[RMDB]
RNA sequence: GGGAACGACUCGAGUAGAGUCGAAAAGAGCCUAUAUUGGUUUUGAAAGGACCUUUAAGUCCCUACUAUACUACAUUGUACUAGCGUAGGCCACGUAGGCCCGUAAGAUAUUAUAACUAUUUUAUUAAACAAUACGCAAUUUCGAUUGCGUAUUGUUAAAAGAAACAACAACAACAAC
Reactivity to DMS in 0.01 (KOAc 150mM, MgCl2 10mM, bicine 150mM(pH8.5), 24C), signal-to-noise 2, nucleotides 027 to 126: g000a140g000c020c000u000a010u000a100u020u000g010g000u000u000u050u030g000a150a170a190g000g000a010c000c030u000u020u040a150a170g000u000c020c000c030u000a180c050u000a090u000a060c020u040a030c120a100u010u010g030u030a070c210u000a040g010c070g020u010a010g000g000c000c020a030c140g010u020a000g040g010c020c000c040g000u010a020a030g000a090u000a010u010u010a130u020a090a170c050u000a040u010u010u010u010a050u020u020a080
Reactivity to 2A3 in 0.01 (KOAc 150mM, MgCl2 10mM, bicine 150mM(pH8.5), 24C), signal-to-noise 3, nucleotides 027 to 126: g020a010g030c000c010u030a030u040a060u110u120g070g010u090u070u110u090g070a060a030a000g040g000a010c050c000u060u110u090a120a040g020u040c000c000c000u030a040c050u060a050u020a020c040u020a020c000a180u100u210g090u030a070c090u070a050g040c000g130u050a020g010g000c000c010a050c110g020u000a010g010g000c000c000c020g060u090a030a050g050a070u130a030u210u120a140u060a160a020c030u080a170u050u080u060u000a050u020u080a060